The record gives the reactivity of an RNA of 177 nucleotides to DMS.
The RNA was probed in 150 mM KOAc, 10 mM MgCl2 and 150 mM bicine (pH 8.5) at 24 C.
Source: RMDB libraries RFM100 and RFMREP, as collected in RNAgym.
For DMS the reverse transcriptase was MarathonRT.
[RMDB]
RNA sequence: GGGAACGACUCGAGUAGAGUCGAAAAUUAGUUGAAUGUGUUGGCAGAAUUUAGAAAUAGCUGGCAAUAGUAAAACCAUGUUAUGAGCCUUUAUGGCAUUGAGGUUGUUAAGGUCCCUUAAAGUAACAUUACCCCCAGAAUUCGUUCUGGGGGUAAUAAAAGAAACAACAACAACAAC
Reactivity to DMS in 0.01 (KOAc 150mM, MgCl2 10mM, bicine 150mM(pH8.5), 24C), signal-to-noise 2, nucleotides 027 to 126: u020u020a080g020u000u000g010a160a080u030g030u000g030u000u010g010g000c020a020g010a110a090u030u020u040a080g000a090a120a100u010a050g020c020u010g000g000c020a050a030u010a090g010u020a050a040a070a050c020c050a030u030g010u000u020a040u000g000a110g000c010c030u000u000u000a050u020g000g010c020a170u000u010g010a050g000g010u000u000g000u000u000a020a070g010g010u000c000c000c000u000u020a060a040a080g010u040a050a080c140